RNA sequence: GGGAACGACUCGAGUAGAGUCGAAAAGUCUAGCGAAAGGAUCCCACCCGGGAGACACGCAAGUCGCGAAUUAUGCCGACCGGCCAAGGUCAAUGGCAGAACUCAACUGCAUGAGUAAGCUAGACGAAUCACCGUAUUUAUUCGUAAAUACGGUGAUAAAAGAAACAACAACAACAAC
Reactivity to DMS in 0.01 (KOAc 150mM, MgCl2 10mM, bicine 150mM(pH8.5), 24C), signal-to-noise 9, nucleotides 027 to 126: g010u000c000u000a000g010c000g010a100a140a150g010g010a130u000c000c000c010a170c300c070c130g000g010g000a070g000a140c020a060c060g010c010a060a100g020u010c190g010c120g010a090a040u000u010a110u010g010c000c010g000a050c010c020g010g020c120c170a140a130g000g000u000c010a100a080u000g010g000c010a010g000a060a060c120u010c070a080a090c030u000g000c030a120u000g000a110g010u000a060a160g000c000u000a000g010a010c000g010a120
Reactivity to 2A3 in 0.01 (KOAc 150mM, MgCl2 10mM, bicine 150mM(pH8.5), 24C), signal-to-noise 5, nucleotides 027 to 126: g000u000c000u000a010g000c010g060a120a030a010g090g010a040u000c010c010c010a050c020c020c010g000g040g000a030g010a010c040a010c040g020c050a100a070g150u130c060g030c040g120a060a070u260u080a050u130g000c000c010g010a010c000c000g060g050c080c050a100a050g010g000u020c030a040a120u190g030g000c010a010g010a060a040c030u040c080a030a080c030u040g000c030a050u060g010a020g110u030a020a000g000c000u000a000g000a000c000g000a000